The record gives the reactivity of an RNA of 177 nucleotides to 2A3 and DMS. It was measured as part of the RMDB library OK2TRN. The 2A3 profile rests on 1,200 reads. The reactions ran in a buffer of 150 mM KOAc, 10 mM MgCl2 and 150 mM bicine (pH 8.5), at 24 C. 2A3 adducts were read by reverse transcription with SuperScript II with manganese.
[RMDB]
RNA sequence: GGGAACGACUCGAGUAGAGUCGAAAAGUGAUAGCCCCGUAUGCGAAAACAGUAUUGUGGAACUAGGUGUACGACAAGUAGGGCGGGACACGUGAAAUCCUGUCUGAAGAUGGGGGGACCAUCCUCCCUUGUGACAAGCAUUCGUGCUUGUCACAAGAAAAGAAACAACAACAACAAC
Reactivity to 2A3 in 0.01 (KOAc 150mM, MgCl2 10mM, bicine 150mM(pH8.5), 24C), signal-to-noise 2, nucleotides 027 to 126: g070u080g160a140u120a140g030c070c000c000c000g050u030a020u050g030c030g050a110a100a040a000c040a030g120u190a180u300u290g030u090g070g040a020a070c010u010a090g080g000u040g000u020a050c050g010a000c040a030a010g040u020a050g020g000g000c080g010g000g000a010c090a020c060g120u100g110a010a040a040u000c000c000u050g010u000c040u050g030a020a020g100a120u110g000g000g000g000g000g000a000c030c000a080u090c000c000u000c000c000
Reactivity to DMS in 0.01 (KOAc 150mM, MgCl2 10mM, bicine 150mM(pH8.5), 24C), signal-to-noise 2, nucleotides 027 to 126: g010u000g000a070u030a110g000c020c000c030c050g020u000a030u010g010c000g000a050a050a100a140c060a040g000u040a070u010u000g000u000g020g010a080a150c210u000a080g000g020u010g030u010a030c050g000a160c160a040a080g000u000a090g000g000g000c010g000g020g000a010c100a040c230g020u000g000a120a070a180u000c040c000u000g000u000c020u010g000a050a120g010a060u000g000g010g000g000g010g000a130c170c140a060u000c040c020u000c010c030